[RMDB]
RNA sequence: GGGAACGACUCGAGUAGAGUCGAAAAGGCGCCGGGCUGCAGUCGGCCGAGCUGUACCUGCUGGCGCUAGCGCACUCAGAGGCGCCCGGCUACACGGCAAAUGAGCGCUACGCGCUCUCGGCGUACCUGACGCUGUUUGUAGCGCUCGCGGAGCGGGCAUAUGUUAUAUAUUCGUAUAUAACAUAUGAAAAGAAACAACAACAACAAC
Reactivity to 2A3 in 0.01 (KOAc 150mM, MgCl2 10mM, bicine 150mM(pH8.5), 24C), signal-to-noise 2, nucleotides 027 to 156: g030g010c020g000c080c040g060g000g020c060u090g010c040a050g070u100c050g050g050c040c040g020a020g000c020u070g020u090a080c010c010u070g050c070u090g160g000c000g000c000u030a050g000c000g000c010a090c040u130c060a020g050a120g080g030c020g010c000c010c040g080g010c020u080a050c070a020c040g120g000c040a050a070a120u160g000a020g000c030g000c070u160a090c220g050c010g060c050u000c030u040c000g020g000c010g000u020a160c010c040u090g070a060c030g020c020u060g100u160u130u170g030u040a020g000c030g000c010u000c010g030c030g020g040a010g010c060g010g020g000
Reactivity to DMS in 0.01 (KOAc 150mM, MgCl2 10mM, bicine 150mM(pH8.5), 24C), signal-to-noise 1, nucleotides 027 to 156: g010g000c030g020c020c000g020g000g000c030u020g000c010a100g030u000c040g020g030c090c030g030a160g010c000u010g000u000a080c030c010u020g030c060u010g020g040c010g060c010u000a030g040c030g040c030a100c020u000c040a090g010a200g030g000c040g090c010c000c110g010g040c030u000a050c050a050c040g000g000c030a050a060a060u010g000a020g020c000g000c020u010a020c100g010c160g030c050u000c010u000c090g010g020c040g030u000a090c090c050u000g010a070c030g020c010u000g020u000u000u010g010u000a040g010c000g020c000u000c010g000c030g000g010a080g020c000g020g000g020
The record gives the reactivity of an RNA of 207 nucleotides to 2A3 and DMS. The RNA was probed in 150 mM KOAc, 10 mM MgCl2 and 150 mM bicine (pH 8.5) at 24 C. For DMS the reverse transcriptase was MarathonRT. For 2A3, 1,201 sequencing reads were counted. Values cover nucleotides 27 to 156.